Background
Structure probing data (DMS and 2A3) for a 177-nucleotide construct. High DMS reactivity at an A or C suggests that its Watson-Crick edge is free. Conditions: 150 mM KOAc, 10 mM MgCl2 and 150 mM bicine (pH 8.5), 24 C. DMS adducts were read by reverse transcription with MarathonRT.
[RMDB]
RNA sequence: GGGAACGACUCGAGUAGAGUCGAAAAAGGCGCCCGCCCCCACCGCGCGCCGGACGCGUCCCUGCCCCUUGUACACACCGCCCGUCGCUCCUACCGACUGGGCGCGGCGGCGAGCGUCCCGGACCGGGUGGUUUAUACAUUUCGAUGUAUAAACCACAAAAGAAACAACAACAACAAC
Reactivity to DMS in 0.01 (KOAc 150mM, MgCl2 10mM, bicine 150mM(pH8.5), 24C), signal-to-noise 5, nucleotides 027 to 126: a070g010g000c050g020c030c030c030g020c030c010c000c010c040a190c100c050g010c130g020c080g000c000c020g010g010a050c030g000c050g000u020c030c040c010u010g000c010c010c080c090u020u010g040u030a060c150a090c130a070c120c030g000c030c010c020g010u000c010g010c060u010c060c060u010a150c200c050g000a070c080u020g030g000g000c070g020c050g010g000c020g010g010c080g010a110g000c020g010u010c040c000c020g020g000a120c060c040g000g020
Reactivity to 2A3 in 0.01 (KOAc 150mM, MgCl2 10mM, bicine 150mM(pH8.5), 24C), signal-to-noise 5, nucleotides 027 to 126: a010g080g000c050g020c010c010c000g010c010c000c000c000c000a020c000c010g020c010g000c040g030c010c000g010g000a010c010g020c010g140u060c040c010c000u010g010c010c010c000c030u070u160g120u160a060c090a010c010a020c040c030g020c020c000c000g010u010c010g000c020u070c020c010u050a110c040c020g070a060c080u180g000g000g000c000g000c000g000g000c000g000g000c010g000a010g010c010g010u030c030c070c020g020g020a020c020c010g040g030